An RNA of 177 nucleotides, treated with DMS and read out base by base. The reactions ran in a buffer of 150 mM KOAc, 10 mM MgCl2 and 150 mM bicine (pH 8.5), at 24 C. For DMS the reverse transcriptase was MarathonRT.
RNA sequence: GGGAACGACUCGAGUAGAGUCGAAAAAGUUUCCGAGUGGGGGUGGAGGACCAUACCAGCUGAGGGGGACGUUUCUAGGUGAAGUACAGGAUCUCCAGACCGAACUGAGCCAACCAGGCCCCAGGAGAAACCGUACUCGAUUCGUCGAGUACGGUUUAAAAGAAACAACAACAACAAC
Reactivity to DMS in 0.01 (KOAc 150mM, MgCl2 10mM, bicine 150mM(pH8.5), 24C), signal-to-noise 1, nucleotides 027 to 126: a170g000u000u000u010c020c000g010a120g010u000g000g000g010g020g020u000g000g010a060g000g010a080c060c040a140u010a130c030c060a090g000c070u010g010a130g000g000g060g000g000a140c120g030u000u020u000c010u000a100g040g010u000g020a120a060g040u010a060c180a180g000g000a090u000c050u020c060c090a090g020a140c060c040g000a070a080c070u000g010a230g000c000c040a020a070c050c060a100g000g000c040c000c050c080a050g000g010a120g000